[RMDB]
RNA sequence: GGGAACGACUCGAGUAGAGUCGAAAAGAACUCACCAGCAAAUGUUUACGACAAGAUUGGACAUUUGCAAAUUACGUAGCGAUCUUCCAGAAUCUUGUCGAAACGUUCCCAAUCGCUACGCCCUAAAUAACAACUUAUACUUCGGUAUAAGUUGUUAAAAAGAAACAACAACAACAAC
Reactivity to DMS in 0.01 (KOAc 150mM, MgCl2 10mM, bicine 150mM(pH8.5), 24C), signal-to-noise 6, nucleotides 027 to 126: g010a150a140c130u010c060a090c080c080a150g000c020a020a030a020u010g010u000u000u000a210c030g020a020c010a010a010g020a050u000u000g010g010a050c100a030u000u000u000g000c040a060a060a080u010u010a050c010g020u000a010g010c000g000a020u000c130u000u010c120c130a110g010a060a040u000c000u000u000g000u000c010g010a040a050a210c050g000u000u000c000c000c000a110a030u000c010g010c000u000a000c010g000c020c040c000u000a040a050a090
Reactivity to 2A3 in 0.01 (KOAc 150mM, MgCl2 10mM, bicine 150mM(pH8.5), 24C), signal-to-noise 5, nucleotides 027 to 126: g030a070a040c030u030c060a070c030c010a020g030c020a050a030a020u070g010u060u090u120a050c010g000a000c000a010a010g010a030u050u120g090g020a030c040a080u050u060u080g000c000a030a010a030u130u070a030c020g010u010a000g010c000g010a010u020c060u180u030c120c030a060g120a080a050u010c010u010u020g010u010c010g060a150a080a010c020g000u010u010c010c000c000a000a010u000c000g000c000u000a010c000g010c010c000c000u130a130a130a060